The record gives the reactivity of an RNA of 177 nucleotides to 2A3 and DMS. The reactions ran in a buffer of 150 mM KOAc, 10 mM MgCl2 and 150 mM bicine (pH 8.5), at 24 C. The 2A3 profile rests on 1,925 reads. DMS adducts were read by reverse transcription with MarathonRT.

RNA sequence: GGGAACGACUCGAGUAGAGUCGAAAAGGAGGUAUGGAAUAUUUAUGGAGGUAGACCCAAUCUCCAAGAUAGGAAGUGUUAGUUUCCGAAGGGAGACUUACUCAAAAGCUCCAACAUCGAGAGGAUAUAUUCUAUCUCCUUUCGAGGAGAUAGAAUAAAAAGAAACAACAACAACAAC
Reactivity to 2A3 in 0.01 (KOAc 150mM, MgCl2 10mM, bicine 150mM(pH8.5), 24C), signal-to-noise 2, nucleotides 027 to 126: g030g020a040g000g010u150a090u120g020g070a130a050u040a090u120u120u040a270u100g000g010a010g000g030u030a010g050a080c000c010c020a000a020u000c020u000c000c030a000a000g010a010u060a000g060g070a100a090g030u040g030u120u050a030g030u010u020u020c030c040g010a050a010g080g000g010a020g000a010c000u000u020a010c000u020c070a000a140a040a060g040c020u020c040c010a010a040c020a080u120c040g060a070g040a060g200g110a070u110a010
Reactivity to DMS in 0.01 (KOAc 150mM, MgCl2 10mM, bicine 150mM(pH8.5), 24C), signal-to-noise 5, nucleotides 027 to 126: g000g010a030g010g020u010a090u000g000g020a200a100u000a040u010u000u000a100u010g010g000a020g000g000u010a040g020a250c040c020c020a080a030u000c010u010c010c010a030a100g020a040u000a040g000g010a150a090g010u000g000u010u000a030g010u000u000u000c000c010g020a200a100g010g010g010a040g010a020c030u000u000a010c040u000c100a060a060a100a100g000c050u000c020c020a080a100c120a070u010c040g000a100g000a090g000g000a080u010a090